[RMDB]
RNA sequence: GGGAACGACUCGAGUAGAGUCGAAAAGUCUACCCGAUUGCCGUCCUGAAUGGCCUUGUCGACAGUUGGGCACGCUGUCCCCGGCUGGUCUUCGACGUCCAGGAGGCCGAAGACCUCAGCGCCUACGCAUUCAAGCACACUUCGGUGUGCUUGAAUGAAAAGAAACAACAACAACAAC
Reactivity to DMS in 0.01 (KOAc 150mM, MgCl2 10mM, bicine 150mM(pH8.5), 24C), signal-to-noise 3, nucleotides 027 to 126: g010u000c070u010a090c040c020c010g010a090u000u000g000c020c020g010u000c010c020u000g010a150a090u000g010g020c070c050u000u010g020u010c050g030a080c040a040g010u000u010g010g000g030c030a050c120g020c070u010g000u000c070c010c010c070g000g000c030u000g000g020u000c010u000u000c010g010a040c030g010u020c050c110a120g010g010a140g010g010c030c020g010a040a050g010a060c010c030u010c090a060g000c070g020c020c030u000a080c180g000
Reactivity to 2A3 in 0.01 (KOAc 150mM, MgCl2 10mM, bicine 150mM(pH8.5), 24C), signal-to-noise 1, nucleotides 027 to 126: g030u000c050u090a060c000c000c020g050a070u080u120g040c000c010g040u040c000c020u070g150a140a080u170g070g030c020c040u140u120g050u060c040g010a020c010a040g040u000u040g020g010g000c060a010c060g050c070u080g030u060c000c000c010c040g010g010c000u070g010g050u020c000u040u020c020g090a100c050g050u010c010c020a140g070g120a080g030g010c010c000g020a010a000g020a030c040c010u040c050a050g000c030g020c030c000u040a060c090g000
This 177-nucleotide RNA was probed chemically with DMS and 2A3. Conditions: 150 mM KOAc, 10 mM MgCl2 and 150 mM bicine (pH 8.5), 24 C. The DMS profile rests on 3,799 reads. Values cover nucleotides 27 to 126. It was measured as part of the RMDB library OK2TRN. For DMS the reverse transcriptase was MarathonRT.